Source: RMDB library OK3TST, as collected in RNAgym. The record gives the reactivity of an RNA of 207 nucleotides to DMS and 2A3. For DMS, 12,453 sequencing reads were counted. The RNA was probed in 150 mM KOAc, 10 mM MgCl2 and 150 mM bicine (pH 8.5) at 24 C. Values cover nucleotides 27 to 156.
RNA sequence: GGGAACGACUCGAGUAGAGUCGAAAAUAAGCAUAUUGUUCCUGCUCAAGCUGAACCACUUAAAGCAUUACUUUCAAGUAUGACUGAUGAGCAAAUUGAAAUGUUCAACGAGUUCAUGAAACAUUCUGCUGUAGUCAACUUUGAUGAGCAAGGCGAAACGUACUUUAGCAUUCGUGCUAAAGUACGUAAAAGAAACAACAACAACAAC
Reactivity to DMS in 0.01 (KOAc 150mM, MgCl2 10mM, bicine 150mM(pH8.5), 24C), signal-to-noise 5, nucleotides 027 to 156: u000a070a120g020c060a140u010a060u000u000g010u000u000c020c020u000g010c060u000c050a090a290g020c010u010g000a210a100c020c030a090c040u000u000a030a060a080g030c030a090u010u000a030c020u000u000u000c060a070a050g030u000a040u000g030a100c040u000g020a070u000g010a020g020c000a020a090a090u000u020g010a030a160a110u000g000u000u000c010a030a040c030g010a300g010u010u000c030a070u010g010a130a080a110c020a060u000u000c060u000g010c080u010g020u000a060g010u000c020a040a030c010u020u000u010g010a050u010g010a120g020c030a030a290g000g000c020g000a060a090
Reactivity to 2A3 in 0.01 (KOAc 150mM, MgCl2 10mM, bicine 150mM(pH8.5), 24C), signal-to-noise 9, nucleotides 027 to 156: u130a030a010g050c070a070u080a070u130u170g030u060u050c010c000u010g010c010u010c030a050a070g000c020u040g040a090a080c040c010a120c140u110u130a140a050a010g000c020a070u080u150a120c070u060u100u050c030a020a010g010u040a300u130g010a020c020u040g090a040u150g110a060g010c000a010a060a050u060u050g030a030a020a020u030g010u030u020c040a090a060c150g100a110g130u120u130c080a070u110g020a080a050a030c030a020u030u020c040u060g000c000u020g040u080a000g000u020c000a010a010c020u090u060u170g030a040u040g010a010g010c040a050a060g020g010c050g050a110a070